[RMDB]
RNA sequence: GGGAACGACUCGAGUAGAGUCGAAAAGAUAUGGAAUCUGUCUGGACAUGUAGCACAUUCGGAAACGAAUGUGACUACAACAGCCAGCAGAUUCCUAAGUCAAAAGGAUUACCUUCGGGUAAUCCAAGAAUAUUCCCCAGUUCGCUGGGGAAUAUUCAAAAGAAACAACAACAACAAC
Reactivity to 2A3 in 0.01 (KOAc 150mM, MgCl2 10mM, bicine 150mM(pH8.5), 24C), signal-to-noise 2, nucleotides 027 to 126: g000a010u040a010u050g000g010a000a000u000c010u020g300u200c050u020g020g030a050c080a300u300g000u000a000g060c000a010c000a000u000u000c000g000g000a020a010a000c010g000a000a010u020g010u010g000a000c000u000a000c000a030a080c040a040g060c020c000a000g010c000a020g010a000u000u010c000c000u000a010a000g010u000c000a010a010a010a250g020g000a000u000u010a010c000c000u060u150c300g100g000g000u000a000a010u000c010c010a000a000
Reactivity to DMS in 0.01 (KOAc 150mM, MgCl2 10mM, bicine 150mM(pH8.5), 24C), signal-to-noise 2, nucleotides 027 to 126: g000a010u000a060u020g000g000a010a010u000c000u000g000u030c020u000g000g000a020c180a250u000g010u000a020g000c000a020c000a010u010u000c000g040g000a010a030a020c020g000a030a000u000g010u000g000a120c000u010a000c000a080a060c290a140g030c000c010a000g020c000a010g000a010u000u000c000c000u000a000a060g000u010c000a090a120a140a140g010g000a010u000u000a020c000c000u000u040c200g030g020g010u000a000a020u000c000c000a040a030